Chemical mapping of a 177-nucleotide RNA with DMS and 2A3. The DMS profile rests on 82,269 reads. For 2A3, 46,941 sequencing reads were counted. The RNA was probed in 150 mM KOAc, 10 mM MgCl2 and 150 mM bicine (pH 8.5) at 24 C. 2A3 is a SHAPE reagent: it acylates the 2'-hydroxyl of flexible nucleotides of all four kinds. It was measured as part of the RMDB library OK1LIB.
RNA sequence: GGGAACGACUCGAGUAGAGUCGAAAACGGCAGUUGCAUCGGCAUUUAGCCCACGGUAUCUGUGGGCGACGAAUAAGCGUCGUCGCAGAUACGCUACCUCCCUAGGUCGUGUAGCGUGAUGCUAUGGUCUAGUCAUGGGCUUCGGUCCAUGGCUAGAAAAAGAAACAACAACAACAAC
Reactivity to DMS in 0.01 (KOAc 150mM, MgCl2 10mM, bicine 150mM(pH8.5), 24C), signal-to-noise 9, nucleotides 027 to 126: c080g000g010c040a080g010u000u010g010c040a050u010c060g010g000c030a090u010u010u010a180g020c010c060c020a080c110g010g010u000a010u000c010u000g010u000g030g030g010c000g000a010c010g000a230a120u050a120a140g010c020g010u000c000g020u000c000g000c000a010g000a020u000a000c000g000c070u010a040c040c030u000c050c040c050u010a100g000g010u010c030g010u010g000u000a050g000c000g010u010g000a070u020g010c010u000a040u020g000g010
Reactivity to 2A3 in 0.01 (KOAc 150mM, MgCl2 10mM, bicine 150mM(pH8.5), 24C), signal-to-noise 9, nucleotides 027 to 126: c020g050g010c040a060g030u100u080g020c010a030u050c030g030g000c030a050u070u070u140a050g020c000c010c010a030c040g060g000u020a010u010c000u010g010u080g180g030g080c000g000a000c000g010a050a200u260a260a050g200c010g000u000c000g000u000c000g000c000a000g000a000u010a000c000g000c000u020a020c000c010u090c030c010c040u080a050g000g050u060c030g010u030g020u070a030g020c040g030u080g040a050u110g000c010u020a070u120g070g010